[RMDB]
RNA sequence: GGGAACGACUCGAGUAGAGUCGAAAACAAACAACAAAACAAACAAAACAACAACCUCUCGUCCAGAAAGGACGAGAGGAACCGGCUAACUCCGUGCCAGCAGCCGCGGAAGGACGAAAACGUCCAAGCAUCGCAAGCACUUCGGUGCUUGUGAUGCAAAAGAAACAACAACAACAAC
Reactivity to DMS in 0.01 (KOAc 150mM, MgCl2 10mM, bicine 150mM(pH8.5), 24C), signal-to-noise 2, nucleotides 027 to 126: c070a130a160a120c130a060a120c110a040a000a050a010c300a060a110a110c220a050a040a000a010c300a040a140c140a060a120c000c010u000c050u000c000g000u000c010c000a100g000a140a080a150g020g060a000c000g000a000g000a000g030g000a000a030c100c050g000g010c070u050a010a210c040u000c080c000g040u020g000c010c060a270g000c080a000g000c140c030g000c080g050g000a080a110g000g010a000c000g000a130a120a000a150c040g000u000c000c000a060a170
Reactivity to 2A3 in 0.01 (KOAc 150mM, MgCl2 10mM, bicine 150mM(pH8.5), 24C), signal-to-noise 5, nucleotides 027 to 126: c030a010a100a020c070a050a020c050a050a150a030a000c080a050a120a030c060a030a150a020a020c090a020a050c010a040a060c020c000u000c000u000c010g000u000c000c020a060g290a200a130a050g090g000a000c000g000a000g000a000g000g000a000a000c010c010g060g000c030u070a070a020c020u010c020c010g030u020g040c030c010a040g010c010a010g020c080c010g050c010g060g000a060a100g030g000a000c010g060a040a130a100a020c040g030u000c000c000a000a020